Description:
The record gives the reactivity of an RNA of 177 nucleotides to 2A3 and DMS.
[RMDB]
RNA sequence: GGGAACGACUCGAGUAGAGUCGAAAAACUUCGCGGUGCCGAUCGCCGACCGGGCGAUGGCCGAAAGCGCCAUCCACAUUUCGUCCAUCCCGCCCGUGCCGGGCAAGUUCUACUGGAUGAGCCCGACUGGGCUUAUGAGUUUCGACUCAUAAGCCCAAAAAGAAACAACAACAACAAC
Reactivity to 2A3 in 0.01 (KOAc 150mM, MgCl2 10mM, bicine 150mM(pH8.5), 24C), signal-to-noise 4, nucleotides 027 to 126: a000c040u070u070c050g000c030g060g040u100g030c080c010g080a060u070c020g010c020c000g080a120c040c000g060g000g000c020g010a010u010g020g000c020c010g060a060a040a020g120c080g040c020c040a080u110c050c010a080c010a110u010u040u030c010g010u000c010c000a020u030c050c050c030g000c010c010c010g030u070g070c080c010g000g000g000c010a000a040g010u010u050c040u070a180c090u130g010g000a010u020g020a020g010c000c000c000g040a050c070
Reactivity to DMS in 0.01 (KOAc 150mM, MgCl2 10mM, bicine 150mM(pH8.5), 24C), signal-to-noise 4, nucleotides 027 to 126: a120c060u000u020c010g030c050g000g000u000g030c030c080g000a070u000c060g010c010c020g000a110c190c040g010g000g030c040g000a010u030g000g000c010c000g030a030a050a070g000c170g020c030c030a020u020c040c090a160c090a120u000u000u000c020g000u010c010c010a100u010c040c080c060g020c030c000c040g000u020g040c080c040g000g000g000c000a030a200g000u000u000c010u020a150c180u020g010g020a020u010g030a300g010c000c010c020g000a100c180
Values cover nucleotides 27 to 126. 2A3 adducts were read by reverse transcription with SuperScript II with manganese. For DMS, 5,353 sequencing reads were counted. It was measured as part of the RMDB library OK1LIB. The 2A3 profile rests on 3,218 reads.